[RMDB]
RNA sequence: GGGAACGACUCGAGUAGAGUCGAAAAGUUGUAGUGAGCUGAGAUUGUGCCAUUGCACUCCAGCCUGUGCAACAGAGCGAGACUCUGUCUCAAGAAAAAAAAAGUAAACAGCCUAUUUAUAUAUAUCACUCAAUGAUUUGUUCGCAAAUCAUUGAGUAAAAGAAACAACAACAACAAC
Reactivity to 2A3 in 0.01 (KOAc 150mM, MgCl2 10mM, bicine 150mM(pH8.5), 24C), signal-to-noise 1, nucleotides 027 to 126: g000u000u040g010u060a110g120u010g080a100g030c010u000g080a150g020a300u240u190g010u010g020c000c120a250u100u300g000c000a000c000u010c010c000a020g000c000c010u090g000u000g020c010a010a010c000a050g050a000g010c150g000a000g000a030c020u110c030u250g090u080c000u000c000a020a090g020a060a100a000a000a020a000a030a020a000g030u050a090a050a070c040a020g020c010c010u100a150u120u200u000a140u000a000u040a000u010a010u150c010
Reactivity to DMS in 0.01 (KOAc 150mM, MgCl2 10mM, bicine 150mM(pH8.5), 24C), signal-to-noise 1, nucleotides 027 to 126: g010u010u020g010u020a110g010u000g000a140g030c000u020g000a050g000a050u010u010g000u010g010c040c300a160u010u050g020c000a000c010u000c010c010a070g000c000c030u000g020u020g010c020a000a030c050a090g000a100g010c070g000a110g010a090c010u000c120u040g000u010c000u000c010a080a070g010a020a020a000a010a030a010a110a150a060g010u010a020a050a080c090a090g030c010c020u010a180u000u000u000a080u000a090u000a080u000a150u050c140

Conditions: 150 mM KOAc, 10 mM MgCl2 and 150 mM bicine (pH 8.5), 24 C. This 177-nucleotide RNA was probed chemically with 2A3 and DMS. For DMS, 717 sequencing reads were counted. For DMS the reverse transcriptase was MarathonRT.